[RMDB]
RNA sequence: GGGAACGACUCGAGUAGAGUCGAAAACACAUUCCGUGGCGAGCGAUCACCGGAAUGCGGCACAAGAUCGUGCAUGACUACAUGUUCGUUGACGAAGACAUCGUGUGGAAAACGGUGACGGAGGAACCGCAUACCGCCGGUUCGCCGGCGGUAUGCGAAAAGAAACAACAACAACAAC
Reactivity to DMS in 0.01 (KOAc 150mM, MgCl2 10mM, bicine 150mM(pH8.5), 24C), signal-to-noise 1, nucleotides 027 to 126: c020a110c110a000u000u000c000c050g020u000g030g000c000g000a000g040c170g000a220u000c020a030c020c020g020g000a030a000u000g000c160g010g000c010a090c080a100a290g000a080u040c250g040u000g000c000a130u070g020a100c190u130a030c170a100u000g000u000u000c020g000u000u040g000a300c040g030a250a120g000a110c000a000u110c030g000u000g000u050g000g020a100a000a070a000c030g000g000u000g020a240c000g020g040a300g020g000a030a050c020
Reactivity to 2A3 in 0.01 (KOAc 150mM, MgCl2 10mM, bicine 150mM(pH8.5), 24C), signal-to-noise 3, nucleotides 027 to 126: c010a010c010a010u040u030c000c010g000u060g060g030c080g040a190g070c190g090a200u100c070a000c010c030g010g010a030a010u050g000c010g070g000c040a060c050a090a160g100a230u150c120g040u020g000c030a070u180g080a070c110u120a030c230a150u130g040u020u070c070g030u040u050g040a120c000g060a050a000g030a000c010a010u030c020g010u030g000u150g040g190a030a060a040a050c000g000g010u030g000a080c030g000g020a020g030g020a050a070c050
Description: Conditions: 150 mM KOAc, 10 mM MgCl2 and 150 mM bicine (pH 8.5), 24 C. The record gives the reactivity of an RNA of 177 nucleotides to DMS and 2A3. Reactivities are given for positions 27 through 126. For DMS the reverse transcriptase was MarathonRT. It was measured as part of the RMDB library OK1LIB. For 2A3 the reverse transcriptase was SuperScript II with manganese.